[RMDB]
RNA sequence: GGGAACGACUCGAGUAGAGUCGAAAAAAAAGUAACUGAUUCUGACGGAAUCUCGCUGUGUGGCCCAGGCUGGAGUGCGGUGGCGCGACCUCGGCUCACUGCAAGCUCCACCUCCUGGGUUCACACCAUCCUGCUGCUUCAGGCUGCCCAGUAGCUACACUAUCCAGUGGUUCGCCACUGGAUAGUGAAAAGAAACAACAACAACAAC
Reactivity to 2A3 in 0.01 (KOAc 150mM, MgCl2 10mM, bicine 150mM(pH8.5), 24C), signal-to-noise 2, nucleotides 027 to 156: a000a000a000a050g080u070a110a070c030u040g000a040u010u000c020u050g220a080c080g040g050a030a040u080c130u140c210g140c100u040g000u010g000u000g020g000c000c000c000a000g000g030c000u030g000g010a010g000u040g000c000g060g000u020g030g080c170g020c060g300a300c070c090u130c130g090g010c060u090c040a000c000u060g030c010a080a170g050c000u020c000c000a000c010c050u000c000c000u000g000g000g000u090u110c000a000c000a000c000c000a040u040c000c020u010g080c030u090g000c000u030u060c000a030g010g040c010u030g050c000c000c000a050g090u100a000g080c050u110a020